The data come from the RNA Mapping Database (RMDB), library TTRINS.
This 177-nucleotide RNA was probed chemically with DMS.
For DMS the reverse transcriptase was MarathonRT.
Conditions: 150 mM KOAc, 10 mM MgCl2 and 150 mM bicine (pH 8.5), 24 C.
[RMDB]
RNA sequence: GGGAACGACUCGAGUAGAGUCGAAAAGAUAUGGAGCAUUCAGGCUAGCGAGGUGAAAUUUAAAUCAGUGGUCGGAAACGACCACUGAUUUAAAUUUCACUCGCUUGGACCCUGGUGCUCCUAAGUCCUAUACCGAUAACUUCGGUUAUCGGUAUAGAAAAGAAACAACAACAACAAC
Reactivity to DMS in 0.01 (KOAc 150mM, MgCl2 10mM, bicine 150mM(pH8.5), 24C), signal-to-noise 1, nucleotides 027 to 126: g000a090u020a300u000g020g020a020g010c000a020u000u010c010a010g020g020c100u010a010g010c010g010a010g000g030u010g030a010a020a020u000u000u000a010a000a020u000c000a010g040u000g010g030u000c000g020g010a090a150a300c000g040a020c010c000a000c000u010g000a000u000u000u000a000a000a010u000u000u000c000a050c000u000c020g000c020u010u000g060g000a120c300c010c010u000g000g030u000g010c010u000c000c010u000a000a060g030u020c050